About this RNA:
The record gives the reactivity of an RNA of 207 nucleotides to DMS and 2A3. DMS adducts were read by reverse transcription with MarathonRT.
[RMDB]
RNA sequence: GGGAACGACUCGAGUAGAGUCGAAAAUGGACAUUCGUGUCCAAUAGAGGAUAUGGAAAGAGGAUGCAGACCUGAUGACCUUUCUCGGAAACGAGAAAGCAAGGGUCUGAACUACAUUGACCUCUUUCCUAAGUCUGACCGGGUUAUUCGUAACCAAACACAUGUAAUCCUUCGGGAUUACAUGUGUAAAAGAAACAACAACAACAAC
Reactivity to DMS in 0.01 (KOAc 150mM, MgCl2 10mM, bicine 150mM(pH8.5), 24C), signal-to-noise 1, nucleotides 027 to 156: u000g010g000a000c000a020u000u000c250g010u010g020u000c010c000a040a110u000a120g000a300g000g010a070u000a300u000g010g010a000a060a040g000a030g000g000a280u000g010c000a020g010a030c000c000u000g000a200u020g010a090c300c010u000u010u000c000u020c000g010g000a130a160a290c010g010a020g000a000a000a000g000c000a040a180g000g040g010u020c000u010g010a020a080c060u010a110c120a260u000u000g000a130c010c000u000c010u000u000u000c000c010u000a010a140g020u000c010u000g010a170c010c070g020g030g000u000u000a040u020u010c090g010u000a080a130c030c000a130a150
Reactivity to 2A3 in 0.01 (KOAc 150mM, MgCl2 10mM, bicine 150mM(pH8.5), 24C), signal-to-noise 4, nucleotides 027 to 156: u060g010g010a020c020a010u090u090c300g110u110g000u000c000c020a000a000u080a030g090a030g000g000a010u020a030u170g000g000a010a000a010g010a000g020g010a020u120g030c000a000g000a000c000c000u110g070a290u110g040a070c010c000u000u000u020c000u000c000g020g030a050a080a020c030g000a000g010a000a000a000g000c040a030a180g020g000g000u020c010u000g010a000a020c010u100a070c050a210u040u250g130a160c000c000u010c000u010u000u000c000c000u010a030a010g000u000c010u010g050a060c020c030g100g000g030u040u040a040u090u120c300g040u090a060a010c050c000a020a140